The record gives the reactivity of an RNA of 177 nucleotides to 2A3 and DMS. 2A3 adducts were read by reverse transcription with SuperScript II with manganese. Source: RMDB library 15KREP, as collected in RNAgym. DMS adducts were read by reverse transcription with MarathonRT.
RNA sequence: GGGAACGACUCGAGUAGAGUCGAAAACUCCCCGUUCCUGGAGAAGGGAGACUCGGGAACGCCUAGCAUCUGAGGGACAAAGCCGCCCCCGGGCGCUCCCCUCGGAGGUCCACUGGGUGGGUUCACACCCUAUCAAAUACUUCGGUAUUUGAUAGGGAAAAGAAACAACAACAACAAC
Reactivity to 2A3 in 0.01 (KOAc 150mM, MgCl2 10mM, bicine 150mM(pH8.5), 24C), signal-to-noise 3, nucleotides 027 to 126: c030u020c020c000c000c010g010u010u010c010c000u050g170g030a070g010a100a080g060g040g020a050g040a020c010u010c020g040g000g000a020a030c010g000c020c010u050a060g010c010a110u020c020u010g000a010g010g010g000a020c030a050a100a000g050c110c040g000c030c050c000c030c030g060g020g010c010g030c010u000c010c000c010c000u010c020g010g000a010g000g030u070c050c020a030c040u050g020g030g030u060g020g080g010u080u060c020a030c010a010
Reactivity to DMS in 0.01 (KOAc 150mM, MgCl2 10mM, bicine 150mM(pH8.5), 24C), signal-to-noise 3, nucleotides 027 to 126: c170u010c000c000c010c020g010u000u000c000c000u000g040g010a090g000a120a050g000g010g010a130g010a080c070u010c090g000g010g010a070a050c040g010c040c040u010a070g020c110a130u000c020u010g010a020g000g010g000a040c060a120a150a090g010c050c090g020c010c000c010c130c210g010g030g020c010g020c020u000c060c000c010c010u000c020g000g000a020g000g020u000c120c150a140c060u000g020g000g020u000g010g010g030u000u010c060a100c170a150